Structure probing data (2A3) for a 207-nucleotide construct. The 2A3 profile rests on 630 reads. The RNA was probed in 150 mM KOAc, 10 mM MgCl2 and 150 mM bicine (pH 8.5) at 24 C.
RNA sequence: GGGAACGACUCGAGUAGAGUCGAAAAGGUGUACUCACUGUUCUUACUGUCAAAUGCACUGUAACAUCCAUGUUACUUUGAUACAUGCUCUUGGAUUUGCAUUCUUGUUCAACUGUCUCCGUUCUUUAUAUAUAAUUUGCCACUGGUCCCAUCCUGACUCGUAUCAUGGGUUCGCCCAUGAUACGAGAAAAGAAACAACAACAACAAC
Reactivity to 2A3 in 0.01 (KOAc 150mM, MgCl2 10mM, bicine 150mM(pH8.5), 24C), signal-to-noise 2, nucleotides 027 to 156: g020g000u060g000u070a080c030u050c150a030c040u090g040u080u000c080u110u020a060c030u030g120u120c080a130a080a140u090g060c010a010c090u000g090u070a050a070c010a000u030c060c050a110u100g000u040u030a030c000u020u070u100g130a090u130a010c010a050u110g010c000u040c010u000u010g060g000a040u070u010u180g050c000a010u010u000c000u040u150g070u000u060c000a100a100c040u030g050u010c000u050c070c030g060u070u000c010u040u280u000a100u000a000u010a010u000a050a230u070u130u040g050c000c010a030c020u030g030g040u000c000c000c020a020u060c000c030u020g060a060